[RMDB]
RNA sequence: GGGAACGACUCGAGUAGAGUCGAAAAAGGAUUCGACGCCGGUUGCGAAACUUUAGGUGCAUGCCGAGUUGGUAACAGAACUCGUAAAUCCACUGUUGCAACUUCCUAUAGUUGCCAAUGACGAAACCUACGGGGAUUACGCUCUCGCUGCGUAAGCGACGUGUCAGGAGUUCGCUCCUGACACGUCAAAAGAAACAACAACAACAAC
Reactivity to 2A3 in 0.01 (KOAc 150mM, MgCl2 10mM, bicine 150mM(pH8.5), 24C), signal-to-noise 3, nucleotides 027 to 156: a000g100g000a090u120u080c030g020a030c080g040c050c030g020g000u020u020g010c030g060a050a060a070c020u150u130u190a130g050g010u080g040c060a050u180g040c030c010g000a020g000u050u010g020g040u020a040a040c010a030g040a050a030c010u000c020g070u090a060a010a040u020c010c010a020c080u080g030u060u030g000c000a010a020c000u030u040c050c100u110a080u080a240g000u010u010g000c030c020a050a050u080g080a030c050g050a060a000a030c000c040u030a040c030g000g040g000g030a000u010u010a010c000g010c020u000c020u030c120g050c110u040g010c000g010u000a020a060g050c070
The record gives the reactivity of an RNA of 207 nucleotides to 2A3. Values cover nucleotides 27 to 156. High 2A3 reactivity points to a flexible backbone, as in loops and unpaired stretches.